An RNA of 177 nucleotides, treated with DMS and read out base by base. Values are in units of 0.01, from 0 to 300, in steps of 10.

RNA sequence: GGGAACGACUCGAGUAGAGUCGAAAAGAUAUGGAAUGCAUGUCUCUCAGUCCAGUGACGAGGUCCCACUCGGAAACGAGUGUGAGACCUUUGACUCACGGACUGAGAGACAUGCAUUCCUAAGUCACGUAGAUUUCUUGUUCGCAAGAAAUCUACGAAAAGAAACAACAACAACAAC
Reactivity to DMS in 0.01 (KOAc 150mM, MgCl2 10mM, bicine 150mM(pH8.5), 24C), signal-to-noise 1, nucleotides 027 to 126: g010a090u000a300u000g010g010a030a000u000g010c000a010u000g010u000c000u010c010u000c020a010g000u000c000c010a180g040u000g000a010c040g010a010g010g000u000c000c000c000a010c010u000c010g000g010a210a080a260c020g000a030g010u000g000u000g010a150g010a000c010c000u000u010u020g000a080c300u020c000a020c030g020g000a020c000u000g020a000g020a010g040a010c000a000u000g000c000a010u000u000c000c000u040a010a050g010u000c020a300
For DMS the reverse transcriptase was MarathonRT. For DMS, 1,153 sequencing reads were counted. It was measured as part of the RMDB library TTRINS.